An RNA of 207 nucleotides, treated with 2A3 and read out base by base. It was measured as part of the RMDB library M2RFPK. The RNA was probed in 150 mM KOAc, 10 mM MgCl2 and 150 mM bicine (pH 8.5) at 24 C.
[RMDB]
RNA sequence: GGGAACGACUCGAGUAGAGUCGAAAAGAUCUGCGCCGAUCCGAAACGCUAGCAAACAGCCCGCAUCAUGUCGUCUCCUAACUUCGACGUGGUGAAAUACUGAGCUUAGGCGAGUAAGCCUGUUAGCAAUAGAUCAGAACGUUCGCGUUCUGAUCAACUCUGGCACGAUGUUCGCAUCGUGCCAGAGAAAAGAAACAACAACAACAAC
Reactivity to 2A3 in 0.01 (KOAc 150mM, MgCl2 10mM, bicine 150mM(pH8.5), 24C), signal-to-noise 2, nucleotides 027 to 156: g030a060u050c030u130g040c040g060c030c000g020a040u100c050c030g010a060a020a090c090g000c020u020a000g000c030a080a030a100c030a090g010c020c000c000g000c040a000u000c000a020u000g000u010c000g050u050c080u170c060c140u130a090a090c070u060u020c000g010a020c000g000u020g000g000u000g020a000a030a000u230a110c080u040g020a000g000c000u050u080a010g020g000c000g040a040g200u100a080a050g000c010c010u040g010u120u100a000g000c020a050a050u160a140g000a000u000c000a000g000a000a000c000g010u030u090c170g000c010g140u000u000c030u000g000a000u000c000a020a000